[RMDB]
RNA sequence: GGGAACGACUCGAGUAGAGUCGAAAAGCCGCAUUCUGCUACCUACCGGCGGGCUACCACGAGAAACUCCUGAAAUAUGGCGUCGAUAUUGAAGCUCAGGUCGUUCAAUGGGUUCGUGGAGGUCAGUGGGAUUUAUGCGUUUCGACGCAUAAAUCCCAAAAGAAACAACAACAACAAC
Reactivity to 2A3 in 0.01 (KOAc 150mM, MgCl2 10mM, bicine 150mM(pH8.5), 24C), signal-to-noise 2, nucleotides 027 to 126: g020c000c000g070c010a010u140u050c040u110g000c070u000a020c000c000u040a120c000c050g040g000c000g010g020g020c020u030a060c030c010a030c060g030a000g050a040a070a020c050u030c050c000u050g110a020a000a080u300a120u100g020g020c010g020u060c010g000a020u050a080u140u200g090a060a000g090c050u100c080a040g080g080u100c030g000u000u010c020a050a080u140g070g000g000u000u010c020g000u000g000g000a020g000g010u030c030a020g030u080